Chemical mapping of a 177-nucleotide RNA with 2A3 and DMS. The 2A3 profile rests on 564 reads. Reactivities are rounded to 0.1 and cut off at 0 and 3. It was measured as part of the RMDB library RFM100. The RNA was probed in 150 mM KOAc, 10 mM MgCl2 and 150 mM bicine (pH 8.5) at 24 C. DMS adducts were read by reverse transcription with MarathonRT.

RNA sequence: GGGAACGACUCGAGUAGAGUCGAAAAGAAGGAAGUUCUGAGCGAAAUCAGGUGGCCGCAUAUAUUGCGAGCCAGAUAGGGCAGAACGCGCAGUCCGUGCAGACCACGGCAGAGUCGCAUUUGCGUUGGGACUCUGCUAUUUCGAUAGCAGAGUCCCAAAAGAAACAACAACAACAAC
Reactivity to 2A3 in 0.01 (KOAc 150mM, MgCl2 10mM, bicine 150mM(pH8.5), 24C), signal-to-noise 1, nucleotides 027 to 126: g160a000a000g110g040a050a010g030u000u020c000u000g000a030g130c060g050a000a090a190u120c080a060g080g110u000g040g000c030c000g030c000a000u050a000u090a000u180u160g000c000g000a000g000c000c000a000g000a000u050a000g000g060g020c030a000g000a000a000c010g020c000g000c040a040g090u030c030c040g000u000g000c030a020g080a210c010c000a000c000g110g050c010a090g000a010g140u160c050g080c060a050u060u000u170g050c030g030u080u000
Reactivity to DMS in 0.01 (KOAc 150mM, MgCl2 10mM, bicine 150mM(pH8.5), 24C), signal-to-noise 1, nucleotides 027 to 126: g020a060a010g000g000a240a130g000u000u010c010u000g080a050g040c000g000a140a110a020u020c000a300g000g160u000g000g040c050c040g000c000a050u040a120u000a040u060u000g000c010g000a050g000c100c000a040g000a000u010a140g040g000g070c020a030g000a040a050c070g000c000g000c060a140g030u060c000c040g010u000g010c040a170g020a060c190c130a080c030g030g000c020a180g050a090g030u010c000g000c050a090u040u030u020g000c070g040u010u000